[RMDB]
RNA sequence: GGGAACGACUCGAGUAGAGUCGAAAAGAUAUGGACCCAUACCAGCUUUUGACGUAUGGUCGGAAACGACCAUAACGAUAAGCUGAUGGGUCCUAAGUCAAAAGCUAACGUGUUCGCACGUUAGCAACUUAGCAGUUUCGUUCGCGAAACUGCUAAGAAAAGAAACAACAACAACAAC
Reactivity to DMS in 0.01 (KOAc 150mM, MgCl2 10mM, bicine 150mM(pH8.5), 24C), signal-to-noise 3, nucleotides 027 to 126: g000a020u000a190u000g000g020a010c010c000c000a010u040a140c300c030a000g020c000u000u010u010u020g000a280c260g000u000a000u000g000g030u000c000g020g000a030a030a040c010g020a000c000c000a010u000a010a040c000g020a130u010a030a040g030c000u010g000a010u000g020g000g010u000c000c000u000a000a040g020u010c010a110a040a140a120g000c000u000a000a000c010g020u000g020u000u000c240g010c000a000c000g000u000u000a010g020c000a020a030
Reactivity to 2A3 in 0.01 (KOAc 150mM, MgCl2 10mM, bicine 150mM(pH8.5), 24C), signal-to-noise 2, nucleotides 027 to 126: g030a020u020a030u090g000g000a000c040c020c030a000u100a160c190c050a020g010c040u130u180u300u300g100a010c020g000u000a010u000g000g010u010c000g000g000a020a010a000c000g020a010c000c010a000u000a030a010c010g070a090u150a300a010g000c000u000g000a010u000g000g010g010u000c000c000u000a010a000g000u000c010a000a050a090a060g010c000u000a000a000c000g010u020g040u130u130c300g030c140a000c000g020u000u020a000g010c010a010a000
Chemical mapping of a 177-nucleotide RNA with DMS and 2A3.
For 2A3, 3,506 sequencing reads were counted.
The DMS profile rests on 2,100 reads.
The reactions ran in a buffer of 150 mM KOAc, 10 mM MgCl2 and 150 mM bicine (pH 8.5), at 24 C.
For 2A3 the reverse transcriptase was SuperScript II with manganese.
For DMS the reverse transcriptase was MarathonRT.